Description: The record gives the reactivity of an RNA of 177 nucleotides to 2A3 and DMS.
[RMDB]
RNA sequence: GGGAACGACUCGAGUAGAGUCGAAAAAGUCGCGCCGGGGCGAUACCGAUAUCCAUCGCCUGGAUGCGCUGCUGGUUGUACUGGUCCCUGGUGUUCAUGAACGCCUUGACGCCGGCCGCGACCAGGGCACUCUCAAUAAGUUCGCUUAUUGAGAGUGAAAAGAAACAACAACAACAAC
Reactivity to 2A3 in 0.01 (KOAc 150mM, MgCl2 10mM, bicine 150mM(pH8.5), 24C), signal-to-noise 8, nucleotides 027 to 126: a010g040u030c020g000c010g000c000c020g040g020g010g000c000g000a010u040a060c030c060g130a110u070a100u280c110c060a010u010c010g010c010c010u050g100g030a180u120g010c020g000c010u020g020c010u030g030g060u060u050g040u080a090c020u030g010g000u010c030c000c000u010g000g010u020g020u080u050c050a050u070g140a300a080c140g140c090c000u010u030g010a000c000g000c010c000g020g000c060c060g010c060g000a000c000c000a000g010g000g000
Reactivity to DMS in 0.01 (KOAc 150mM, MgCl2 10mM, bicine 150mM(pH8.5), 24C), signal-to-noise 9, nucleotides 027 to 126: a040g020u010c170g030c020g020c010c030g010g020g000g010c010g000a020u000a070c190c130g000a150u010a090u010c180c140a040u000c020g010c010c010u000g000g010a070u010g020c010g010c020u000g010c030u000g000g010u010u000g010u010a080c040u000g000g010u000c040c010c010u000g000g020u000g010u010u000c050a060u000g010a150a110c210g010c090c040u000u000g000a050c080g000c010c010g000g010c110c100g010c090g010a030c010c000a010g010g010g000
Conditions: 150 mM KOAc, 10 mM MgCl2 and 150 mM bicine (pH 8.5), 24 C.
It was measured as part of the RMDB library OK2TST.